RNA sequence: GGGAACGACUCGAGUAGAGUCGAAAACGUAUGCGGAAAGCGCUGUCGGAUGACAGCUUUCGCCGCGAGGCGAUGGGCAUUUGGGACGAGUACGCGGUUCACCAGCCGAUCGUCAAGCCGACGAUUUGGCGGUCGCUGGCCGACCUCGGCCCCGAGCGCCUGGUCAGUCUUUCGAGACUGACCAGGCAAAAGAAACAACAACAACAAC
Reactivity to 2A3 in 0.01 (KOAc 150mM, MgCl2 10mM, bicine 150mM(pH8.5), 24C), signal-to-noise 2, nucleotides 027 to 156: c030g060u100a010u300g010c000g020g050a080a080a040g170c150g010c010u000g020u010c050g090g300a300u300g000a080c000a000g000c000u020u020u040c080g000c080c030g030c020g010a100g020g020c010g030a040u160g070g090g000c130a110u020u020u120g000g000g030a020c000g000a000g010u030a010c100g000c020g000g040u160u260c070a030c080c000a030g050c060c030g000a000u000c000g000u000c000a010a010g070c050c070g140a140c070g030a140u040u000u080g000g020c000g000g030u000c000g000c000u000g020g040c000c000g040a040c000c000u000c020g010g010c000c010c000c010g070a050g030c100